[RMDB]
This 177-nucleotide RNA was probed chemically with 2A3 and DMS.
Source: RMDB libraries RFM100 and RFMREP, as collected in RNAgym.
For 2A3, 2,094 sequencing reads were counted.
2A3 adducts were read by reverse transcription with SuperScript II with manganese.
Conditions: 150 mM KOAc, 10 mM MgCl2 and 150 mM bicine (pH 8.5), 24 C.
RNA sequence: GGGAACGACUCGAGUAGAGUCGAAAAGAGGUAGAAAGUCCCAAAGCUCGUGCUAAAGCAUCUGCCGUUUAGUGUUGCAGUUUAGCCUUUUGUACCUUUCCACGGCUUUUCUGUGUCAAAUCAACGGGUUUUUUAACCAGUUCGCUGGUUAAAAAACAAAAGAAACAACAACAACAAC
Reactivity to 2A3 in 0.01 (KOAc 150mM, MgCl2 10mM, bicine 150mM(pH8.5), 24C), signal-to-noise 3, nucleotides 027 to 126: g020a000g020g020u080a020g050a080a070a020g090u060c040c040c000a030a040a040g030c030u050c070g090u100g020c020u070a110a040a020g010c000a050u030c020u090g050c010c010g020u050u050u080a110g030u040g050u080u150g020c050a010g020u010u030u070a030g020c000c000u060u110u060u130g130u130a080c020c000u030u070u060c080c040a060c040g020g000c010u030u040u030u000c030u020g030u000g070u030c040a040a050a110u030c020a030a050c040g000g060
Reactivity to DMS in 0.01 (KOAc 150mM, MgCl2 10mM, bicine 150mM(pH8.5), 24C), signal-to-noise 3, nucleotides 027 to 126: g000a070g000g010u000a050g000a030a070a140g000u010c010c020c030a100a150a080g020c040u000c080g010u000g010c060u000a100a100a110g030c020a070u010c070u010g010c000c020g010u000u020u010a030g010u010g000u020u030g020c050a030g030u000u000u010a030g000c030c010u010u000u000u010g020u000a050c050c010u010u000u010c040c030a150c250g010g000c050u000u000u000u000c020u030g020u000g000u000c070a040a090a120u030c090a050a110c130g010g000